[RMDB]
RNA sequence: GGGAACGACUCGAGUAGAGUCGAAAAUAACGAGUAUCUAGGGUCUUGCCGCGAUCACCAACAUUAUAAAACAAUGCUUCAUACGGGUUGGUCUUGAAGUCGACGAGUUGCGCGCGCAUAUUCGAGGCACGAGCGGCUAAACUAGGUCUUAAGCCGCGACGUCAUUAGGAUUCGUCCUAAUGACGUCAAAAGAAACAACAACAACAAC
Reactivity to DMS in 0.01 (KOAc 150mM, MgCl2 10mM, bicine 150mM(pH8.5), 24C), signal-to-noise 2, nucleotides 027 to 156: u020a060a130c040g020a070g000u020a020u000c030u010a040g000g040g020u010c090u000u000g020c070c030g060c070g000a130u000c050a080c060c000a070a300c000a060u010u000a110u000a090a070a100a220c100a050a060u010g020c030u000u000c080a060u020a070c180g040g010g000u000u000g030g000u000c030u010u000g010a050a090g030u000c040g010a080c000g000a070g050u000u000g040c120g000c070g040c040g000c030a130u020a180u010u000c110g030a100g020g000c010a070c050g000a100g000c010g050g020c020u000a020a040a070c060u000a100g040g000u000c010u000u000a090a210g010c070c030g020c030
Reactivity to 2A3 in 0.01 (KOAc 150mM, MgCl2 10mM, bicine 150mM(pH8.5), 24C), signal-to-noise 3, nucleotides 027 to 156: u140a040a040c090g010a010g020u170a010u030c020u030a030g030g020g120u040c080u080u080g020c010c020g000c010g040a050u080c040a020c040c020a010a040c020a050u120u190a110u180a160a110a030a040c120a090a120u090g050c080u090u120c070a060u090a200c060g150g000g000u050u050g050g000u020c040u050u120g060a060a020g020u060c040g040a210c010g010a030g090u040u070g030c080g010c040g000c010g000c040a020u060a100u240u030c010g010a020g000g020c020a010c130g010a020g020c000g000g000c010u020a000a020a020c010u000a000g000g030u000c000u030u020a050a010g030c020c010g090c080